Background: Structure probing data (DMS and 2A3) for a 177-nucleotide construct. The reactions ran in a buffer of 150 mM KOAc, 10 mM MgCl2 and 150 mM bicine (pH 8.5), at 24 C.
RNA sequence: GGGAACGACUCGAGUAGAGUCGAAAACAAAGAGAGUUCGCUCUCUUUGAAAUACUAAGACCGAAGCUUAGAUGGCCGUCACUUCCCUUGGAAACCGGCAAAAAACAGAAGGGUUCGCCCUUCUGAACAAUUAAUUUCGGUUCGCCGAAAUUAAUUGAAAAGAAACAACAACAACAAC
Reactivity to DMS in 0.01 (KOAc 150mM, MgCl2 10mM, bicine 150mM(pH8.5), 24C), signal-to-noise 4, nucleotides 027 to 126: c000a000a000a000g010a010g000a030g020u000u010c220g020c000u000c000u000c000u000u010u010g000a070a080a080u000a100c030u010a030a040g000a100c080c120g000a090a110g000c030u000u000a020g010a170u000g000g010c010c010g000u010c120a110c090u000u000c000c010c030u000u000g000g010a050a120a080c250c010g000g000c050a000a050a060a080a070a120c010a010g000a010a010g010g020g030u010u000c220g000c000c000c000u000u000c000u000g000a070a130
Reactivity to 2A3 in 0.01 (KOAc 150mM, MgCl2 10mM, bicine 150mM(pH8.5), 24C), signal-to-noise 1, nucleotides 027 to 126: c000a000a030a000g000a000g000a010g020u050u070c090g080c050u010c000u000c000u030u000u020g000a000a000a000u180a030c010u020a020a030g030a020c030c090g230a110a000g000c010u020u020a020g020a060u090g110g000c020c020g010u020c030a030c070u030u040c000c000c000u040u030g080g020a090a000a040c050c040g000g070c000a030a100a080a000a000a080c000a030g000a000a010g020g000g000u020u040c230g070c000c000c000u000u000c010u010g000a020a000